[RMDB]
Chemical mapping of a 207-nucleotide RNA with DMS and 2A3. The DMS profile rests on 3,756 reads. The 2A3 profile rests on 2,300 reads. DMS adducts were read by reverse transcription with MarathonRT. For 2A3 the reverse transcriptase was SuperScript II with manganese. The reactions ran in a buffer of 150 mM KOAc, 10 mM MgCl2 and 150 mM bicine (pH 8.5), at 24 C.

RNA sequence: GGGAACGACUCGAGUAGAGUCGAAAAGAAAGAAAGCAAGCUGACCCUUCUGCUGACGGAUCUUGUGGAGCACCACAGUGCAGAAGGGGAGAGAAGCUUUAAUGCCGACCGUCUGGGCAGCCUUGAAAAAACGGAUUCUUCUUCGGAAGAAUCCGAACAACAUCAUUAGCUUCGGCUAAUGAUGUUGAAAAGAAACAACAACAACAAC
Reactivity to DMS in 0.01 (KOAc 150mM, MgCl2 10mM, bicine 150mM(pH8.5), 24C), signal-to-noise 2, nucleotides 027 to 156: g020a080a080a140g000a110a060a060g010c000a030a070g010c030u000g020a070c000c000c000u020u000c000u000g040c010u010g000a130c090g000g000a090u000c030u000u030g020u010g000g020a200g010c200a090c010c010a020c030a100g010u010g000c010a010g010a050a010g010g000g000g000a040g010a120g030a070a130g010c010u000u000u000a020a130u000g000c010c010g040a080c060c030g010u010c070u030g020g010g010c000a070g000c080c060u000u000g000a000a080a080a050a090a240c030g020g010a010u000u000c000u000u000c000u000u000c300g020g010a010a010g000a030a010u000c010c010g010a030a060
Reactivity to 2A3 in 0.01 (KOAc 150mM, MgCl2 10mM, bicine 150mM(pH8.5), 24C), signal-to-noise 3, nucleotides 027 to 156: g070a010a090a020g090a060a070a000g020c040a030a060g010c020u050g090a080c000c000c000u000u010c000u000g020c030u050g040a050c050g080g000a080u100c060u180u060g010u010g020g030a100g130c080a120c100c000a010c020a030g040u050g040c000a010g000a000a010g010g000g000g000a000g010a000g000a010a010g010c000u040u020u060a110a060u120g030c010c000g020a080c030c010g020u010c020u070g000g020g010c010a010g020c010c020u110u110g100a110a040a000a000a000a040c010g000g000a000u000u000c000u010u000c000u020u060c160g070g010a000a000g000a000a000u000c000c000g000a000a010